[RMDB]
RNA sequence: GGGAACGACUCGAGUAGAGUCGAAAACGGCAUGGCCGGGUAGCCGCGUCCGGCGCGGAUAACCGCUGAAGGCAUCUAAGCGGGAAGCCGUUCCCGAGAUCAGUUCUCCUUCUGGUAAGGGCCCAGGGGCAUCAUCUGGAUUCGUCCAGAUGAUGCCAAAAGAAACAACAACAACAAC
Reactivity to 2A3 in 0.01 (KOAc 150mM, MgCl2 10mM, bicine 150mM(pH8.5), 24C), signal-to-noise 3, nucleotides 027 to 126: c000g020g010c070a050u110g120g000c000c010g030g000g000u010a010g020c020c020g060c010g000u000c000c010g000g060c070g010c020g030g020a080u040a050a040c000c000g000c000u010g050a060a050g080g020c040a030u050c030u040a000a020g000c000g030g010g050a020a050g000c030c010g020u020u030c020c000c000g010a020g010a080u050c070a040g000u030u040c040u020c040c000u060u070c030u040g030g000u060a070a060g030g010g010c000c000c000a020g050g000
Reactivity to DMS in 0.01 (KOAc 150mM, MgCl2 10mM, bicine 150mM(pH8.5), 24C), signal-to-noise 2, nucleotides 027 to 126: c020g000g030c010a170u020g030g000c030c000g000g000g030u020a100g000c010c040g000c070g000u030c020c000g000g010c050g030c130g000g010a040u020a080a200c000c000g020c000u000g010a140a130g000g000c120a010u000c020u040a130a090g020c040g000g010g000a120a110g020c020c000g000u010u010c040c000c000g020a120g000a050u010c070a030g010u000u000c020u000c030c050u000u000c040u030g000g040u040a080a220g000g000g000c000c010c020a030g000g020